[RMDB]
RNA sequence: GGGAACGACUCGAGUAGAGUCGAAAAUUGGAUAAGGACCACACCAUCACAGAGUUCCUGUGGAGGCGCAAGUGAGCCGGCUGCUACUCGUAUGGGAUGCCCCCAACCUUGAUAUGGGUCUAGGAGCGUAUGCGUGCGAUUUCGAUCGCACGCAUACAAAAGAAACAACAACAACAAC
Reactivity to 2A3 in 0.01 (KOAc 150mM, MgCl2 10mM, bicine 150mM(pH8.5), 24C), signal-to-noise 1, nucleotides 027 to 126: u070u110g000g060a040u040a220a110g060g010a030c000c040a000c020a010c010c000a010u040c000a010c000a040g140a040g140u140u110c010c000u060g000u020g010g070a060g020g000c050g000c130a080a080g050u060g060a010g050c020c020g000g000c000u090g090c000u030a030c000u020c000g060u040a030u030g050g030g030a030u170g060c040c010c000c000c000a030a050c000c020u000u100g040a040u050a140u300g030g000g000u070c060u060a050g030g100a090g010c040
Reactivity to DMS in 0.01 (KOAc 150mM, MgCl2 10mM, bicine 150mM(pH8.5), 24C), signal-to-noise 2, nucleotides 027 to 126: u000u030g030g020a140u000a090a080g030g010a120c010c030a080c130a140c020c030a040u000c050a040c040a020g030a230g000u010u010c050c000u000g000u010g000g010a050g030g020c070g030c090a070a100g010u010g010a140g020c140c050g020g000c030u000g000c010u000a020c000u000c030g000u010a080u000g000g010g020a090u000g010c030c020c010c060c020a050a100c000c040u010u000g000a090u000a040u000g010g000g000u010c060u000a050g020g000a180g030c110

This 177-nucleotide RNA was probed chemically with 2A3 and DMS.
The RNA was probed in 150 mM KOAc, 10 mM MgCl2 and 150 mM bicine (pH 8.5) at 24 C.
Values cover nucleotides 27 to 126.
The DMS profile rests on 1,246 reads.